Structure probing data (2A3 and DMS) for a 177-nucleotide construct.
For DMS, 1,035 sequencing reads were counted.
It was measured as part of the RMDB library OK2TST.
For 2A3, 1,031 sequencing reads were counted.
Conditions: 150 mM KOAc, 10 mM MgCl2 and 150 mM bicine (pH 8.5), 24 C.
[RMDB]
RNA sequence: GGGAACGACUCGAGUAGAGUCGAAAAGGAGAUGAGCGAGUGCAGAGUGUCAGUCAGGUACGAGUGCACCUCGCGCCGCACGCUCGGGAUGCCCAUCACCACCGACACUAUGGGGGACGGAGGCCCGUACUCCACGCCGAUUCGUCGGCGUGGAGUAAAAAGAAACAACAACAACAAC
Reactivity to 2A3 in 0.01 (KOAc 150mM, MgCl2 10mM, bicine 150mM(pH8.5), 24C), signal-to-noise 1, nucleotides 027 to 126: g110g020a140g010a050u100g000a020g010c080g020a010g060u130g090c020a010g020a010g020u010g060u070c070a080g100u130c070a080g080g010u060a070c050g000a020g030u060g130c060a090c020c010u000c020g000c000g030c010c030g000c000a030c080g010c010u000c000g070g010g000a020u100g020c000c050c000a050u050c030a010c010c000a040c050c030g050a010c000a000c050u090a100u070g120g000g000g000g000a000c010g030g040a030g080g080c030c030c000g050
Reactivity to DMS in 0.01 (KOAc 150mM, MgCl2 10mM, bicine 150mM(pH8.5), 24C), signal-to-noise 1, nucleotides 027 to 126: g010g060a250g020a090u000g000a080g000c010g000a120g040u000g000c080a110g000a060g010u000g000u010c120a100g040u000c110a090g010g000u000a060c080g000a070g010u000g000c170a100c150c020u000c020g020c040g000c000c100g000c060a060c010g000c010u020c010g000g000g000a110u010g020c000c030c000a040u030c060a080c020c030a140c020c020g000a050c040a110c050u000a060u010g000g000g010g010g000a130c050g000g030a170g010g020c040c010c000g020